[RMDB]
RNA sequence: GGGAACGACUCGAGUAGAGUCGAAAAGACAAUCCAGGGAACCGGAUGUCAUCACGUUGUUGCAGUACCAGAUGGCAUCUUAAAUCCGAUCUGCAAAUAAGUAUGUAGAAAGCUGAUGUGGGCUUUAAAAACGUGGUGCUGUUCGCAGCACCACGAACCUGAGUAUCUAGUUCGCUAGAUACUCAGGAAAAGAAACAACAACAACAAC
Reactivity to 2A3 in 0.01 (KOAc 150mM, MgCl2 10mM, bicine 150mM(pH8.5), 24C), signal-to-noise 2, nucleotides 027 to 156: g050a020c060a030a070u040c030c000a040g000g010g060a040a030c060c050g050g000a000u000g000u010c000a000u000c000a010c080g060u010u030g060u110u020g060c130a090g060u090a140c050c000a030g000a010u010g000g020c010a010u010c000u020u090a010a110a050u000c020c020g040a070u030c020u040g000c020a010a000a090u090a140a160g060u090a080u130g000u010a020g080a130a060a000g030c060u100g040a060u100g120u070g100g040g000c030u180u060u120a030a060a000a000a030c000g000u010g000g000u010g000c000u010g030u020u060c300g020c090a000g000c000a000c020c000a000c010g000a010a000
Reactivity to DMS in 0.01 (KOAc 150mM, MgCl2 10mM, bicine 150mM(pH8.5), 24C), signal-to-noise 1, nucleotides 027 to 156: g020a140c040a080a110u000c050c010a170g030g030g020a070a110c040c120g020g030a050u000g020u000c010a030u020c010a260c170g000u000u010g010u000u000g010c000a120g000u000a050c020c070a200g020a060u000g030g010c020a010u000c010u000u000a070a140a140u020c040c030g000a120u000c010u000g000c010a070a050a230u010a100a090g020u000a090u010g030u000a070g000a080a080a150g010c070u010g020a060u000g010u020g010g040g000c020u010u000u010a010a020a060a150a070c000g130u000g000g030u000g040c000u020g000u000u000c300g020c020a090g000c000a000c000c000a000c020g000a000a040